[RMDB]
RNA sequence: GGGAACGACUCGAGUAGAGUCGAAAAGGGAACACUGCCAGGACACAUGACAGAGAGGUUUCAGGAAGCCAUUGACAACCUCGCCGUGCUCAUGCGAGCAGAGACUGGAAGCAGGCCUUAUAAGGCACACUGAGGUACUAUUCGUAGUACCUCAGUGAAAAGAAACAACAACAACAAC
Reactivity to DMS in 0.01 (KOAc 150mM, MgCl2 10mM, bicine 150mM(pH8.5), 24C), signal-to-noise 7, nucleotides 027 to 126: g000g000g020a080a060c120a060c030u000g000c030c030a060g000g010a090c220a120c070a060u010g000a100c040a080g000a150g030a060g000g010u000u010u010c030a060g010g000a110a130g000c080c070a120u050u020g000a040c230a030a050c040c020u010c020g000c120c080g000u000g020c100u020c030a060u020g000c080g020a060g000c050a040g000a060g010a100c020u000g000g000a080a050g000c110a100g000g010c010c020u000u030a080u040a080a090g000g000c050a240
Reactivity to 2A3 in 0.01 (KOAc 150mM, MgCl2 10mM, bicine 150mM(pH8.5), 24C), signal-to-noise 9, nucleotides 027 to 126: g040g020g010a060a000c040a010c070u060g030c030c020a030g040g020a000c010a000c010a080u090g030a040c030a020g090a010g020a010g080g040u020u050u070c030a020g050g050a080a030g080c040c040a090u030u070g020a030c060a030a030c000c000u010c010g010c050c030g170u070g000c020u010c030a040u140g050c090g040a020g010c020a010g030a010g020a100c030u020g000g020a020a020g020c070a030g030g060c000c010u210u190a190u060a130a060g020g000c030a000